[RMDB]
RNA sequence: GGGAACGACUCGAGUAGAGUCGAAAACGGCGGUCCUUGGACUAACAGCCCCAAAAACGGCCAGUAGGUUUCUUGGCUGAUUUGCUGUUGGCAUGGGGGCGUCCCAUAGCUGGGAGGUCCGUAUUGGCGAUAAAUAUAAUUUCGAUUAUAUUUAUCGAAAAGAAACAACAACAACAAC
Reactivity to 2A3 in 0.01 (KOAc 150mM, MgCl2 10mM, bicine 150mM(pH8.5), 24C), signal-to-noise 2, nucleotides 027 to 126: c020g020g000c020g020g040u050c010c010u040u100g060g030a050c010u030a030a010c000a030g010c010c000c000c020a000a040a070a020a000c030g010g010c000c010a020g050u060a050g080g000u030u080u060c030u060u060g020g000c010u030g060a130u030u050u130g030c020u010g010u080u050g010g020c030a100u070g000g000g000g000g120c000g070u000c000c000c000a050u150a040g050c160u100g000g000g000a020g030g050u030c000c010g020u100a220u190u250g100g020
Reactivity to DMS in 0.01 (KOAc 150mM, MgCl2 10mM, bicine 150mM(pH8.5), 24C), signal-to-noise 2, nucleotides 027 to 126: c070g000g020c100g000g010u000c010c010u030u020g010g010a110c030u010a040a120c070a080g010c000c160c040c070a060a060a040a070a090c080g000g010c000c010a020g000u020a070g020g010u010u020u000c010u010u010g010g000c010u010g010a300u010u010u020g010c000u000g010u000u000g000g000c060a160u000g000g000g000g000g000c000g000u000c000c000c000a040u030a300g000c300u000g000g000g000a070g000g000u020c010c000g000u010a040u010u010g010g030